[RMDB]
RNA sequence: GGGAACGACUCGAGUAGAGUCGAAAAGGUCGCCUCCCAGCAGCCUACAUCCCCAGCUGCUUACCUCUCUCCCAUCAUGCUCUAGUAGUGCUAUCAUGGGCAAACACAGUAGCUGACAUGCAGUGAUCAUAAUGACCUGAUUCGUCAGGUCAUUAUGAAAAGAAACAACAACAACAAC
Reactivity to 2A3 in 0.01 (KOAc 150mM, MgCl2 10mM, bicine 150mM(pH8.5), 24C), signal-to-noise 9, nucleotides 027 to 126: g040g010u050c020g010c010c020u050c010c010c000a010g010c010a000g000c010c010u050a060c040a110u070c000c010c000c000a000g000c000u020g000c000u010u070a090c010c010u050c010u010c010u020c010c010c000a030u070c010a020u070g010c010u000c010u050a110g060u050a020g010u090g050c030u070a060u240c040a050u060g020g000g030c040a050a080a000c050a010c020a070g050u080a020g010c020u020g030a060c020a050u100g030c030a010g060u050g110a090u030
Reactivity to DMS in 0.01 (KOAc 150mM, MgCl2 10mM, bicine 150mM(pH8.5), 24C), signal-to-noise 7, nucleotides 027 to 126: g000g020u010c050g000c020c020u000c020c010c030a110g000c030a070g010c020c010u000a090c150a160u000c010c020c020c060a120g000c030u000g010c020u000u010a080c070c040u000c030u000c080u000c010c010c020a070u000c120a060u010g010c020u010c020u010a110g020u020a090g000u000g000c030u010a050u010c120a080u010g000g010g010c160a050a040a090c100a050c090a060g000u000a060g010c020u010g000a120c100a060u020g010c060a050g020u010g010a140u000